RNA sequence: GGGAACGACUCGAGUAGAGUCGAAAACAGCUAAAGGAAAAGCAGAAGUUUCGCUUUGCGUAUGGAAUGUCCGAGCGACAAUUCCGUAAUCUUUUUGCUCAGGCACAUCGGAUGAAGGGCGUGACGGGACUGAGUGACGUUUCGACGUCACUCAGUCAAAAGAAACAACAACAACAAC
Reactivity to 2A3 in 0.01 (KOAc 150mM, MgCl2 10mM, bicine 150mM(pH8.5), 24C), signal-to-noise 2, nucleotides 027 to 126: c060a010g030c070u140a050a000a000g050g030a010a050a020a030g010c030a010g060a200a080g080u050u110u100c090g010c010u000u060u120g020c010g000u020a030u070g010g010a010a010u000g000u000c040c020g160a030g100c160g010a050c020a090a210u020u000c010c010g040u050a010a070u020c050u030u030u020u090u060g010c000u020c020a010g020g020c030a020c010a070u040c020g010g020a010u020g040a070a040g010g000g000c010g040u060g000a050c030g060g050
Reactivity to DMS in 0.01 (KOAc 150mM, MgCl2 10mM, bicine 150mM(pH8.5), 24C), signal-to-noise 1, nucleotides 027 to 126: c100a150g020c050u010a020a110a120g000g000a000a030a060a020g000c080a070g000a050a140g020u000u000u010c000g000c040u010u000u030g020c060g050u020a000u030g000g000a050a050u020g020u000c020c040g020a080g020c150g000a020c070a000a020u010u000c040c010g010u060a000a070u000c000u050u000u010u040u010g000c010u000c140a030g000g010c000a050c030a070u000c010g020g030a060u000g000a040a060g000g000g000c010g010u030g000a010c050g000g080

An RNA of 177 nucleotides, treated with 2A3 and DMS and read out base by base. The reactions ran in a buffer of 150 mM KOAc, 10 mM MgCl2 and 150 mM bicine (pH 8.5), at 24 C. DMS adducts were read by reverse transcription with MarathonRT. It was measured as part of the RMDB library OK1LIB.